[RMDB]
RNA sequence: GGGAACGACUCGAGUAGAGUCGAAAAGAUAUGGAAGGAGUCGUCAGCUUCACGUCGGAAACGACGUGAAAGCUUAGACCGACCCUUCCUAAGUCAAAAGCUUGAACGGUGUUCGCACCGUUCAAGCGUCUGUAUGAUCGUUCGCGAUCAUACAGACAAAAGAAACAACAACAACAAC
Reactivity to 2A3 in 0.01 (KOAc 150mM, MgCl2 10mM, bicine 150mM(pH8.5), 24C), signal-to-noise 3, nucleotides 027 to 126: g000a000u030a000u070g000g010a010a000g020g020a090g010u000c010g010u040c040a000g000c000u020u010c000a010c010g010u010c010g010g000a040a020a010c000g000a000c000g000u010g010a010a000a000g000c000u010u160a010g000a000c010c000g000a000c000c000c000u000u000c000c000u000a000a010g000u010c030a060a040a130a190g020c000u000u000g000a000a010c000g000g000u020g050u120u200c300g010c130a000c010c000g000u010u010c000a000a000g000c010
Reactivity to DMS in 0.01 (KOAc 150mM, MgCl2 10mM, bicine 150mM(pH8.5), 24C), signal-to-noise 6, nucleotides 027 to 126: g000a010u000a130u020g000g000a020a000g000g010a100g000u010c000g020u000c010a020g020c000u000u000c000a010c010g000u000c010g020g000a030a040a080c000g010a010c000g000u000g000a010a010a020g020c000u000u000a110g010a010c300c010g000a020c000c000c000u010u000c000c000u000a010a050g000u000c010a130a070a150a240g010c000u000u000g000a010a010c000g010g020u000g010u000u020c300g010c010a000c000c000g010u010u000c000a000a010g010c000